[RMDB]
RNA sequence: GGGAACGACUCGAGUAGAGUCGAAAAAUUAAAGUCAUGAAUGAACCACAGAAGCAAACUCAUGAGACGAGGGAAGAGAGUAAAGAACAAAAUUUAGGACAUAUGUCUCGUCUAAUGCCAUCAUUAGACAUAAGACAUUUUCUUAGACGUAUGUAUAAGUACAAUAAUGCUUCGGCAUUAUUGUACUAAAAGAAACAACAACAACAAC
Reactivity to DMS in 0.01 (KOAc 150mM, MgCl2 10mM, bicine 150mM(pH8.5), 24C), signal-to-noise 3, nucleotides 027 to 156: a140u010u000a040a060a190g010u000c030a030u000g020a110a070u010g000a100a080c010c020a120c080a150g010a100a100g030c040a030a150a070c070u030c020a090u000g000a090g000a130c050g010a090g040g000g000a070a050g010a060g020a060g030u000a040a040a110g020a090a100c050a040a090a110a030u000u000u000a010g000g000a040c070a050u010a010u010g010u000c000u000c030g000u000c000u010a010a010u000g020c140c270a140u020c010a050u000u000a020g010a030c020a060u000a010a000g020a000c020a010u010u000u000u000c010u000u000a020g010a020c030g010u000a090u000g000u000a070u000a070
Reactivity to 2A3 in 0.01 (KOAc 150mM, MgCl2 10mM, bicine 150mM(pH8.5), 24C), signal-to-noise 6, nucleotides 027 to 156: a000u140u100a070a020a010g060u020c020a060u090g090a110a050u040g010a090a070c050c010a040c050a100g060a120a010g020c050a060a060a100c030u030c040a050u090g030a010g020a110c040g010a030g000g030g010a040a010g080a010g020a010g030u110a040a090a040g080a070a010c060a050a100a060a020u110u160u110a040g000g030a020c020a080u090a010u020g000u000c020u020c040g000u000c010u010a000a000u050g050c120c060a120u230c000a000u270u000a000g000a000c000a010u080a020a010g000a010c010a010u040u020u020u000c000u000u030a020g010a050c030g070u100a020u170g040u080a050u140a150

Structure probing data (DMS and 2A3) for a 207-nucleotide construct. For DMS, 5,967 sequencing reads were counted. 2A3 adducts were read by reverse transcription with SuperScript II with manganese. The 2A3 profile rests on 4,435 reads. The reactions ran in a buffer of 150 mM KOAc, 10 mM MgCl2 and 150 mM bicine (pH 8.5), at 24 C.